[RMDB]
RNA sequence: GGGAACGACUCGAGUAGAGUCGAAAAUUUGAUCGGUAUGCUUAGCCGUUGUGUUCGGUUAAGAGCUAAACUACAUAAGGAGAACCCGAUCGAGCACAAGAAGCUAAAACUCAUCAUCAUGUCAGCACCCCUCACUAUGAUUCGUCAUAGUGAGGGGAAAAGAAACAACAACAACAAC
Reactivity to DMS in 0.01 (KOAc 150mM, MgCl2 10mM, bicine 150mM(pH8.5), 24C), signal-to-noise 3, nucleotides 027 to 126: u010u010u000g020a000u000c060g020g030u010a060u010g000c080u000u010a030g000c010c040g000u000u000g020u010g020u000u000c030g030g010u020u000a060a040g020a090g000c070u000a130a140a100c040u010a080c190a140u010a060a070g000g000a090g010a130a110c300c000c000g000a010u000c000g010a020g010c090a040c090a060a030g020a080a100g010c010u010a010a020a070a070c070u000c070a060u010c040a020u000c070a030u020g000u000c080a070g010c180a200
Reactivity to 2A3 in 0.01 (KOAc 150mM, MgCl2 10mM, bicine 150mM(pH8.5), 24C), signal-to-noise 3, nucleotides 027 to 126: u080u010u060g030a030u030c040g000g030u110a050u180g050c010u020u000a010g000c000c030g060u030u100g170u040g050u070u040c000g000g020u010u030a070a010g020a020g050c030u100a090a030a050c030u080a050c050a210u230a190a070g060g020a030g010a000a000c010c010c010g000a000u000c030g010a010g000c010a030c010a100a070g100a090a000g040c030u050a010a010a060a080c030u020c020a060u020c000a000u010c020a050u110g100u100c030a010g010c040a070
Structure probing data (DMS and 2A3) for a 177-nucleotide construct.
The RNA was probed in 150 mM KOAc, 10 mM MgCl2 and 150 mM bicine (pH 8.5) at 24 C.
The data come from the RNA Mapping Database (RMDB), library OK2TST.
For 2A3 the reverse transcriptase was SuperScript II with manganese.